[RMDB]
RNA sequence: GGGAACGACUCGAGUAGAGUCGAAAAUCGAGUUUGGAGUCAUCCGGGCCGAAGGGUUGAGACGCACCCACAGACGGGAGCCUCCAGGAGGGUUUGAGGAGAACUCACCUCCAGAGGACCCCUUCAGAAACCUGUUUGUUCGCAAACAGGAAAAGAAACAACAACAACAAC
Reactivity to 2A3 in 0.01 (KOAc 150mM, MgCl2 10mM, bicine 150mM(pH8.5), 24C), signal-to-noise 7, nucleotides 027 to 129: u060c010g010a010g020u050u090u110g130g010a030g030u150c020a030u000c000c000g000g000g010c000c000g050a080a090g020g000g000u020u050g010a010g010a020c020g000c040a070c000c010c000a030c050a040g040a000c040g000g000g010a060g020c010c000u000c000c010a110g000g000a010g020g030g040u090u210u300g040a030g010g040a110g040a140a060c010u010c010a050c000c000u000c000c000a000g000a000g000g000a020c000c000c000c000u030u040c030a050g090a060a080a030
Reactivity to DMS in 0.01 (KOAc 150mM, MgCl2 10mM, bicine 150mM(pH8.5), 24C), signal-to-noise 5, nucleotides 027 to 129: u030c050g020a000g030u010u020u020g000g000a030g010u070c020a000u000c010c020g000g000g000c040c030g000a120a130g020g010g030u000u020g020a040g000a070c050g000c030a170c000c020c030a100c170a160g000a090c080g000g010g000a100g030c000c000u020c020c070a130g000g020a010g030g030g010u020u060u040g020a000g020g020a240g000a120a180c000u010c000a080c000c010u010c030c010a130g040a000g030g010a070c030c030c020c050u000u000c000a120g030a050a060a050